Overview
The record gives the reactivity of an RNA of 177 nucleotides to DMS and 2A3. 2A3 adducts were read by reverse transcription with SuperScript II with manganese. The 2A3 profile rests on 1,705 reads. The reactions ran in a buffer of 150 mM KOAc, 10 mM MgCl2 and 150 mM bicine (pH 8.5), at 24 C.
[RMDB]
RNA sequence: GGGAACGACUCGAGUAGAGUCGAAAACUUCUAAUUGUAUGCCAUCUGCAGCUUUCUUCUCUUGUUUGUAAUGUCCACUGCAUUCCUGACUGAAUCAGUCAUCUCAUCAACAUACAUCAAUACCUCAGGCUGGUAUCAUAUUCGUAUGAUACCAGCCAAAAGAAACAACAACAACAAC
Reactivity to DMS in 0.01 (KOAc 150mM, MgCl2 10mM, bicine 150mM(pH8.5), 24C), signal-to-noise 1, nucleotides 027 to 126: c000u010u040c030u030a050a130u000u010g000u000a040u000g000c020c000a080u000c050u030g020c020a110g000c110u050u000u010c050u070u010c000u000c070u010u020g000u030u000u000g050u000a080a010u010g070u000c020c010a000c270u000g060c050a080u000u000c050c010u000g000a080c050u000g110a070a120u000c150a030g000u000c060a030u070c090u000c100a050u000c050a060a070c100a040u000a050c050a010u000c050a000a020u060a120c050c020u000c010a150
Reactivity to 2A3 in 0.01 (KOAc 150mM, MgCl2 10mM, bicine 150mM(pH8.5), 24C), signal-to-noise 4, nucleotides 027 to 126: c020u090u070c090u140a140a190u050u110g080u050a040u100g030c030c000a050u020c080u060g000c020a020g020c020u030u110u000c000u100u000c010u000c000u030u070g140u190u080u040g150u130a090a050u100g020u000c030c000a040c030u050g020c000a020u030u030c000c010u000g080a060c030u040g020a040a100u130c020a030g020u020c010a080u010c020u020c000a100u010c020a030a060c000a050u130a030c020a030u130c040a080a230u080a210c000c030u060c030a000